[RMDB]
RNA sequence: GGGAACGACUCGAGUAGAGUCGAAAACGUCCUUCCCUUUUCUUAUUAUUCCGAGGAUGUUUCCCAGCCAGGGAUUUUCAUCCUCGAGUUUCUUGAUGGUUCUCCUGCUCUUCCGGAGCCUUCUUUCGUUAUACUGCAUGUUCGCAUGCAGUAUAACAAAAGAAACAACAACAACAAC
Reactivity to 2A3 in 0.01 (KOAc 150mM, MgCl2 10mM, bicine 150mM(pH8.5), 24C), signal-to-noise 1, nucleotides 027 to 126: c020g060u000c000c020u000u080c010c040c060u110u120u050u060c100u110u190a290u200u060a120u090u070c050c010g000a000g010g000a010u030g030u000u010u010c000c000c000a000g210c170c150a040g040g030g000a020u130u090u070u230c000a000u000c000c000u000c010g000a010g010u060u020u000c030u020u080g060a060u090g050g020u110u010c020u060c010c000u030g000c000u000c000u140u000c080c050g030g040a060g000c000c010u040u010c000u030u000u010c000
Reactivity to DMS in 0.01 (KOAc 150mM, MgCl2 10mM, bicine 150mM(pH8.5), 24C), signal-to-noise 1, nucleotides 027 to 126: c170g010u010c030c030u000u000c040c010c000u010u010u000u030c060u010u010a100u030u000a090u000u000c080c030g010a010g000g010a010u000g010u010u000u000c000c000c000a170g030c300c300a180g030g010g000a020u010u000u000u010c000a000u000c000c000u000c010g010a040g010u000u000u000c070u000u000g000a140u000g010g000u000u000c030u020c010c040u010g020c050u000c010u000u000c100c100g000g000a070g040c060c130u000u010c000u000u000u010c040